[RMDB]
RNA sequence: GGGAACGACUCGAGUAGAGUCGAAAAUAUGGCGGAGCCGAACAGGUCUGGGCCGCGGUCGCCGAGAUGAUCGCCGACGCGCUCGGCGUGGCGGGGGGCGCGGUCGGUGGUGUGGGGAUCGCCUCGGCUUACGCUAAGCAUUCGUGCUUAGCGUAAGAAAAGAAACAACAACAACAAC
Reactivity to 2A3 in 0.01 (KOAc 150mM, MgCl2 10mM, bicine 150mM(pH8.5), 24C), signal-to-noise 2, nucleotides 027 to 126: u230a080u070g030g000c020g030g030a030g060c060c000g020a090a040c030a080g030g080u060c050u100g070g020g000c040c000g000c030g060g160u060c060g020c090c020g020a030g020a080u220g020a020u100c020g000c020c000g010a020c020g000c020g010c050u000c030g030g050c060g020u020g060g000c030g020g030g000g000g000g040c010g000c020g000g100u020c010g000g000u050g010g030u110g010u130g000g010g010g000a010u050c020g020c000c010u010c010g030g000
Reactivity to DMS in 0.01 (KOAc 150mM, MgCl2 10mM, bicine 150mM(pH8.5), 24C), signal-to-noise 3, nucleotides 027 to 126: u010a070u010g010g010c020g010g000a170g010c050c020g020a100a090c150a110g000g010u010c060u000g020g020g020c020c040g010c020g020g000u000c040g020c010c010g010a060g010a140u010g000a090u010c010g000c010c010g000a020c020g010c100g000c080u010c010g020g010c070g030u000g010g020c020g000g000g000g000g000g000c010g020c030g010g010u000c010g010g020u010g010g010u000g010u000g010g000g000g010a090u000c040g020c050c020u000c090g000g000
Chemical mapping of a 177-nucleotide RNA with 2A3 and DMS. For DMS, 6,469 sequencing reads were counted. For DMS the reverse transcriptase was MarathonRT.